[RMDB]
RNA sequence: GGGAACGACUCGAGUAGAGUCGAAAAACACCGUGCAAAAAGCACGGAAGAGUCGUGCAAAGGAGAGGCUCGACAGAUGCACGACAAAGCGAGCCUACAAAAGAACAAAGGAAAACAACAAUAGAAACGACAUGUUGCAGUUCGCUGCAGCAUGUCGAAAAGAAACAACAACAACAAC
Reactivity to DMS in 0.01 (KOAc 150mM, MgCl2 10mM, bicine 150mM(pH8.5), 24C), signal-to-noise 4, nucleotides 027 to 126: a140c200a130c000c010g040u020g000c030a120a060a050a170a140g010c000a020c000g000g000a060a060g000a130g010u010c000g000u000g000c020a040a110a100g000g010a080g020a040g030g000c000u000c000g000a170c050a070g000a130u000g000c020a010c020g010a070c010a020a040a090g030c070g000a030g020c000c000u060a100c180a080a020a110a090g000a130a130c170a020a040a020g040g020a050a070a080a050c100a060a040c180a110a100u040a080g020a040a180a180
Reactivity to 2A3 in 0.01 (KOAc 150mM, MgCl2 10mM, bicine 150mM(pH8.5), 24C), signal-to-noise 6, nucleotides 027 to 126: a000c030a010c010c000g000u010g000c010a080a210a120a140a030g000c000a000c000g000g010a010a030g050a000g000u010c000g000u000g010c020a050a090a090g160g030a190g040a020g030g040c000u010c010g040a040c020a040g100a030u100g000c010a000c010g040a030c050a000a030a040g060c010g010a000g000c000c000u040a070c060a020a120a030a010g100a100a020c060a080a070a050g140g040a070a170a030a010c060a040a000c020a060a070u120a200g080a070a070a000